[RMDB]
RNA sequence: GGGAACGACUCGAGUAGAGUCGAAAACUGUCAGAACGAACGGUCGCAGCUGCAGAACAAGACGCGUGCGUUGCAGGUGCUGGCCGCUCGGUUGCAGGCAAUGGCCGAGGAGCAGGCGCUGGCCGACUGUCUUCGUCCUUUUCGAAGGACGAAGACAAAAAGAAACAACAACAACAAC
Reactivity to DMS in 0.01 (KOAc 150mM, MgCl2 10mM, bicine 150mM(pH8.5), 24C), signal-to-noise 1, nucleotides 027 to 126: c040u010g010u020c090a140g000a080a070c020g010a020a030c010g010g040u000c030g000c030a040g010c010u020g000c020a080g000a040a080c120a090a120g050a100c070g020c090g020u000g050c300g010u010u000g000c010a020g000g000u000g010c010u010g020g000c000c020g020c000u000c010g010g000u000u000g010c040a030g000g000c120a110a070u010g000g010c030c000g000a060g010g010a100g020c000a100g000g020c060g010c050u000g010g000c020c030g010a120c220
Reactivity to 2A3 in 0.01 (KOAc 150mM, MgCl2 10mM, bicine 150mM(pH8.5), 24C), signal-to-noise 1, nucleotides 027 to 126: c000u020g100u080c040a030g050a140a050c020g020a000a000c000g000g000u030c000g000c050a110g020c000u000g010c000a010g050a130a030c070a210a070g130a080c000g040c090g100u080g030c020g070u070u000g000c000a000g050g030u050g020c020u200g020g000c030c010g000c000u000c020g000g030u010u070g050c040a030g050g000c030a050a210u150g050g000c030c010g070a080g000g060a090g060c110a050g020g030c070g000c060u060g040g000c000c020g000a060c020

An RNA of 177 nucleotides, treated with DMS and 2A3 and read out base by base. The reactions ran in a buffer of 150 mM KOAc, 10 mM MgCl2 and 150 mM bicine (pH 8.5), at 24 C.